[RMDB]
RNA sequence: GGGAACGACUCGAGUAGAGUCGAAAAGCUCAGGGGUUCGCCCCUGAGCAAAAGAUACGGGUCUCGGUAUCAAAGUCAGUCCGACAGACCACAGGGAACUGAAAAGGGAGGGGUUCGCCCCUCCCAAGUAUAGUCAGUACUUCGGUACUGACUAUACAAAAGAAACAACAACAACAAC
Reactivity to DMS in 0.01 (KOAc 150mM, MgCl2 10mM, bicine 150mM(pH8.5), 24C), signal-to-noise 3, nucleotides 027 to 126: g000c000u000c000a000g010g000g010g010u000u010c230g010c000c020c000c000u000g020a010g000c000a010a010a050a100g010a030u000a020c020g000g010g010u000c030u000c020g050g000u000a030u000c030a180a160a130g000u000c040a060g000u030c090c050g010a130c070a100g000a120c060c030a120c100a120g020g000g010a060a050c120u020g000a060a060a120a120g010g000g020a010g000g010g000g010u000u020c230g010c000c000c000c000u010c000c000c010a000a000
Reactivity to 2A3 in 0.01 (KOAc 150mM, MgCl2 10mM, bicine 150mM(pH8.5), 24C), signal-to-noise 2, nucleotides 027 to 126: g020c000u000c000a000g020g040g010g050u040u120c210g120c010c000c000c020u010g000a010g000c000a000a010a000a000g000a000u040a010c070g000g000g100u010c030u010c040g020g010u080a030u040c040a040a010a010g090u030c040a000g060u020c030c040g000a020c030a040g070a050c040c020a010c020a080g050g020g010a080a130c060u090g030a030a080a060a150g000g000g000a000g000g010g010g010u030u020c140g120c000c000c000c010u030c010c000c000a000a010